[RMDB]
An RNA of 207 nucleotides, treated with DMS and 2A3 and read out base by base.
Reactivities are rounded to 0.1 and cut off at 0 and 3.
Values cover nucleotides 27 to 156.

RNA sequence: GGGAACGACUCGAGUAGAGUCGAAAAGAAAAAUCAGGCUAUUCUUUGGUGGGGAAGGCCAUGAACAUCCAUCAAGUUCAUAAAAAUUCUCUGCGUUCUGGCCAGUUUGAGAAUGCAUGAUAAUACAUAUGUUUUCAGACCUUUUUUAAGUAGCAAACCUAAUGCUACGAUUCGUCGUAGCAUUAGGAAAAGAAACAACAACAACAAC
Reactivity to DMS in 0.01 (KOAc 150mM, MgCl2 10mM, bicine 150mM(pH8.5), 24C), signal-to-noise 1, nucleotides 027 to 156: g020a050a060a080a140a140u000c060a080g000g040c020u000a100u000u000c060u000u010u000g030g060u000g040g030g040g020a050a130g050g050c100c110a090u000g020a020a020c010a140u010c050c080a110u030c040a100a080g020u000u000c050a130u010a010a100a040a110a130u000u000c040u000c000u010g010c020g030u000u010c020u010g010g010c040c070a140g000u000u000u010g000a070g010a010a000u000g030c070a030u000g000a090u010a110a190u010a180c050a040u010a030u000g000u000u000u010u000c000a030g000a020c040c000u000u000u000u000u000u000a110a170g020u000a110g020c050a000a080a140
Reactivity to 2A3 in 0.01 (KOAc 150mM, MgCl2 10mM, bicine 150mM(pH8.5), 24C), signal-to-noise 4, nucleotides 027 to 156: g020a010a070a010a010a030u160c070a020g020g000c020u040a040u130u070c030u080u050u050g010g000u030g010g020g000g000a050a030g020g000c020c010a010u040g000a010a000c010a050u050c080c010a040u060c050a060a060g010u060u080c030a040u160a110a200a060a040a050u060u040c020u010c040u050g040c030g040u020u030c020u020g050g000c030c020a010g000u020u050u070g020a010g000a020a020u010g000c020a010u020g040a060u070a150a040u100a140c020a010u060a030u080g040u010u030u000u010c010a010g020a040c010c000u040u040u070u050u040u220a170a170g030u120a020g030c020a040a040a040